An RNA of 177 nucleotides, treated with 2A3 and DMS and read out base by base.
The reactions ran in a buffer of 150 mM KOAc, 10 mM MgCl2 and 150 mM bicine (pH 8.5), at 24 C.
The 2A3 profile rests on 15,006 reads.
Reactivities are given for positions 27 through 126.
For DMS, 6,730 sequencing reads were counted.
For 2A3 the reverse transcriptase was SuperScript II with manganese.
RNA sequence: GGGAACGACUCGAGUAGAGUCGAAAAGAUAUGGAGUGGCAAGGGAGCUGCUCGGAAACGAGACAGCGAGGAUCUUGCACUCCUAAGUCAAAAGAGUUCCAGUUACGUUCGCGUAACUGGAACUCAACACAGUGUGAAUGUUCGCAUUCACACUGUGAAAAGAAACAACAACAACAAC
Reactivity to 2A3 in 0.01 (KOAc 150mM, MgCl2 10mM, bicine 150mM(pH8.5), 24C), signal-to-noise 5, nucleotides 027 to 126: g040a010u070a050u150g020g000a030g010u120g170g250c000a010a000g010g010g000a010g000c010u010g000c000u010c010g010g010a070a060a010c010g010a000g300a130c010a000g020c030g090a300g000g020a010u010c000u000u000g000c000a010c000u000c000c000u000a030a010g050u030c030a030a000a080a150g000a000g000u010u000c010c000a000g010u000u000a010c030g020u020u080c300g000c010g140u000a000a000c000u000g000g000a000a000c000u000c000a000a000
Reactivity to DMS in 0.01 (KOAc 150mM, MgCl2 10mM, bicine 150mM(pH8.5), 24C), signal-to-noise 4, nucleotides 027 to 126: g010a040u000a300u010g000g000a020g020u000g010g020c010a000a010g000g010g000a050g020c000u000g000c000u000c000g000g000a090a080a190c010g000a010g000a150c000a000g000c000g010a080g000g000a020u010c000u000u000g000c000a010c010u000c000c000u000a010a060g000u000c030a110a070a100a110g000a010g000u000u000c010c000a010g000u000u000a010c010g010u000u010c200g020c010g020u010a000a000c000u000g000g000a000a000c000u000c000a030a100